An RNA of 177 nucleotides, treated with DMS and 2A3 and read out base by base. Conditions: 150 mM KOAc, 10 mM MgCl2 and 150 mM bicine (pH 8.5), 24 C. The 2A3 profile rests on 714 reads. The data come from the RNA Mapping Database (RMDB), library OK2TRN. DMS adducts were read by reverse transcription with MarathonRT. Reactivities are rounded to 0.1 and cut off at 0 and 3. For DMS, 619 sequencing reads were counted.
RNA sequence: GGGAACGACUCGAGUAGAGUCGAAAAUGCUUAAUCAUAACAGUGUAGUCUAAGAUUUCAGCAUUAGAGUGAGAGACUAACUUAACAUGAACUGCUGAGUCAUUAUGGUAGGCGGAGGUAUUUGAGACCCAGUGCUGAAGUUCGCUUCAGCACUGGGAAAAGAAACAACAACAACAAC
Reactivity to DMS in 0.01 (KOAc 150mM, MgCl2 10mM, bicine 150mM(pH8.5), 24C), signal-to-noise 1, nucleotides 027 to 126: u030g020c010u040u000a080a140u010c020a030u000a100a190c240a080g000u000g050u010a060g040u000c020u000a050a110g020a160u030u000u020c050a080g020c050a000u020u000a080g050a120g010u000g020a160g030a080g040a060c060u010a050a080c010u000u010a090a070c190a040u000g020a010a120c190u000g000c030u010g030a020g020u000c040a110u140u000a030u000g000g020u000a080g020g000c030g000g020a080g010g000u000a080u000u020u000g000a130g030a200
Reactivity to 2A3 in 0.01 (KOAc 150mM, MgCl2 10mM, bicine 150mM(pH8.5), 24C), signal-to-noise 1, nucleotides 027 to 126: u090g000c060u060u060a080a020u100c010a110u050a040a100c030a080g000u020g100u190a050g000u060c020u030a010a130g000a060u030u290u030c000a010g020c050a070u070u110a040g020a000g140u010g040a030g050a000g000a020c020u020a020a150c020u070u060a040a000c010a040u030g110a060a040c070u020g000c010u000g020a000g030u020c050a000u090u110a030u040g060g010u010a010g010g000c060g040g010a050g020g020u070a110u030u110u030g060a030g020a000